[RMDB]
RNA sequence: GGGAACGACUCGAGUAGAGUCGAAAAGGCGGGCGAUGACCGACGUUCAUCAGUUUUUUACGUUGCUCAAGCGCCACAACCUGACGCGCCAACAGGCGUUCAAUCUGGUGGCAGACGAUUUGGCCUGGUAAACGUCCUGUUUCGACAGGACGUUUACAAAAGAAACAACAACAACAAC
Reactivity to 2A3 in 0.01 (KOAc 150mM, MgCl2 10mM, bicine 150mM(pH8.5), 24C), signal-to-noise 1, nucleotides 027 to 126: g030g020c050g020g020g060c030g030a020u010g020a000c060c040g010a020c040g040u040u060c040a140u000c030a120g060u030u060u000u010u180u150a010c030g000u000u000g010c010u000c000a090a150g070c010g000c010c010a040c020a030a020c000c000u010g010a000c000g030c000g000c020c000a050a070c000a080g000g040c050g100u240u190c060a020a020u010c050u050g030g010u020g010g020c010a020g050a080c070g040a060u060u000u100g050g000c000c010u080g000
Reactivity to DMS in 0.01 (KOAc 150mM, MgCl2 10mM, bicine 150mM(pH8.5), 24C), signal-to-noise 3, nucleotides 027 to 126: g010g040c250g000g020g010c000g010a120u010g000a030c080c010g030a020c040g010u000u000c150a080u010c070a100g000u000u000u010u010u010u000a010c020g010u000u020g000c300u000c020a040a170g000c010g000c000c000a070c080a070a180c070c010u010g010a070c100g010c050g010c010c010a020a110c110a050g010g000c080g010u000u010c160a070a130u000c030u010g010g020u000g000g000c020a070g000a040c040g000a180u000u010u010g000g000c000c030u010g010